[RMDB]
Structure probing data (DMS) for a 177-nucleotide construct. Conditions: 150 mM KOAc, 10 mM MgCl2 and 150 mM bicine (pH 8.5), 24 C. The DMS profile rests on 843 reads. Reactivities are rounded to 0.1 and cut off at 0 and 3.
RNA sequence: GGGAACGACUCGAGUAGAGUCGAAAAGGUUUUUAUCCGUGACCGGACGGGGAUUGAUCCACUGACGUGGGGAUUCCUUUACAACCGGUGUCCGGUUUCGCAGCUCAGCGAUCAUUUCCCGGGCCCGGCGUAGAACCACUUUCGAGUGGUUCUACGCAAAAGAAACAACAACAACAAC
Reactivity to DMS in 0.01 (KOAc 150mM, MgCl2 10mM, bicine 150mM(pH8.5), 24C), signal-to-noise 1, nucleotides 027 to 126: g020g020u000u010u010u000u010a060u000c000c010g020u010g010a130c060c010g000g040a120c170g040g010g000g010a030u000u000g000a180u000c010c020a020c010u000g050a130c300g020u000g010g010g000g010a110u000u000c000c020u000u010u010a110c200a110a140c040c020g020g020u000g010u000c060c000g070g000u000u000u010c030g000c070a170g010c150u010c200a110g000c230g030a020u000c130a130u010u010u000c120c000c000g000g000g010c090c010c030g000